RNA sequence: GGGAACGACUCGAGUAGAGUCGAAAACUGAUGUGCAGAUAUUCAAAACAUCUCCUGUAGAUCUUGAGCAAGAUGUGCAGAAUGAUAGACUUAAGCUAUUAUCAGUAACGAAAGCUGGGGAGUUGAGAUGGCUUCAAGAUUGGAUAAUGUGGAGAUCUAAAAAUACACUCUUCGGAGUGUAUUUUUAAAAAGAAACAACAACAACAAC
Reactivity to DMS in 0.01 (KOAc 150mM, MgCl2 10mM, bicine 150mM(pH8.5), 24C), signal-to-noise 2, nucleotides 027 to 156: c000u010g020a060u010g040u010g020c030a100g020a160u000a030u010u000c050a050a080a120a110c050a110u000c010u000c030c030u000g010u000a070g020a010u000c020u020u020g010a210g000c140a070a040g020a040u010g010u000g010c030a070g010a050a060u020g000a070u000a090g010a140c050u000u000a040a180g000c020u000a050u000u000a070u010c030a090g030u000a060a090c040g000a090a080a100g000c060u000g000g010g020g030a150g000u000u010g010a070g000a040u000g010g000c030u010u000c060a040a060g010a120u000u000g030g000a080u000a050a080u010g020u000g000g000a270g000a040u010c030
Reactivity to 2A3 in 0.01 (KOAc 150mM, MgCl2 10mM, bicine 150mM(pH8.5), 24C), signal-to-noise 3, nucleotides 027 to 156: c000u020g020a030u070g040u040g050c020a000g070a200u090a080u100u160c070a030a000a080a070c040a050u020c010u010c010c020u030g020u020a020g010a160u010c000u050u080g110a110g100c070a020a020g000a020u040g020u020g080c000a020g050a150a020u110g030a030u040a060g080a040c020u120u160a110a030g020c000u030a010u130u050a010u170c040a030g040u080a060a070c050g060a170a010a040g000c010u020g000g000g010g040a030g010u060u010g040a020g000a020u020g000g050c000u030u020c030a020a070g050a170u020u070g020g000a020u050a120a050u120g030u060g040g050a070g010a030u020c000